RNA sequence: GGGAACGACUCGAGUAGAGUCGAAAAGAUAUGGACGACAGCAACAGCUAUACAUCGGAAACGAUGUGAUAGACAUGCUGAAGUCCUAAGUCAAACUUUGUCUCCAACUUCGGUUGGAGACAAAGAACCAUCGAGAUGACUUCGGUCAUCUCGAUGGAAAAGAAACAACAACAACAAC
Reactivity to DMS in 0.01 (KOAc 150mM, MgCl2 10mM, bicine 150mM(pH8.5), 24C), signal-to-noise 1, nucleotides 027 to 126: g010a030u010a260u010g000g010a000c000g000a300c040a000g000c000a010a080c240a180g040c000u000a020u000a000c000a030u010c010g000g000a100a040a160c020g020a030u000g000u000g000a000u000a000g000a130c180a270u000g020c000u000g000a010a300g000u000c000c000u000a010a050g020u000c040a090a080a110c000u010u000u000g000u000c000u000c000c000a000a000c000u000u000c300g000g010u000u010g000g000a000g000a000c000a010a000a030g020a070a260
The data come from the RNA Mapping Database (RMDB), library TTRDEL. The record gives the reactivity of an RNA of 177 nucleotides to DMS. Reactivities are given for positions 27 through 126. The DMS profile rests on 672 reads.